[RMDB]
RNA sequence: GGGAACGACUCGAGUAGAGUCGAAAACGGCCAGCGGGAUUCGCAAGAGCACCCGCUACGUGCUGCGGGUCGCCAACGACGGCGAGGCGUUGGCACGCCAAACCGGACUGCUUGACAUGCGCGGUCGCAUCCAACAGUGGUUCGCCACUGUUGGAUGAAAAGAAACAACAACAACAAC
Reactivity to 2A3 in 0.01 (KOAc 150mM, MgCl2 10mM, bicine 150mM(pH8.5), 24C), signal-to-noise 4, nucleotides 027 to 126: c010g000g010c020c020a010g000c010g020g010g070a110u160u080c040g000c060a170a070g030a040g040c020a100c010c000c010g000c010u020a020c030g090u120g060c050u040g010c010g020g020g110u040c070g010c030c010a090a080c090g200a020c050g010g020c040g010a040g080g030c020g000u080u200g060g020c050a000c010g000c000c000a060a050a020c010c000g020g020a050c020u050g020c000u110u140g060a030c020a110u160g030c050g000c030g070g000u020c010g000
Reactivity to DMS in 0.01 (KOAc 150mM, MgCl2 10mM, bicine 150mM(pH8.5), 24C), signal-to-noise 4, nucleotides 027 to 126: c050g000g010c040c110a050g000c020g010g000g010a220u000u010c060g010c140a080a100g000a140g020c090a100c000c020c000g030c010u010a020c150g000u010g020c120u000g010c010g010g000g000u000c060g020c000c030a070a100c110g010a120c130g000g000c020g010a210g000g000c000g010u000u000g010g000c060a050c010g010c020c070a030a160a130c030c020g020g000a090c060u000g010c020u000u000g010a100c120a090u010g010c070g010c080g010g000u000c020g000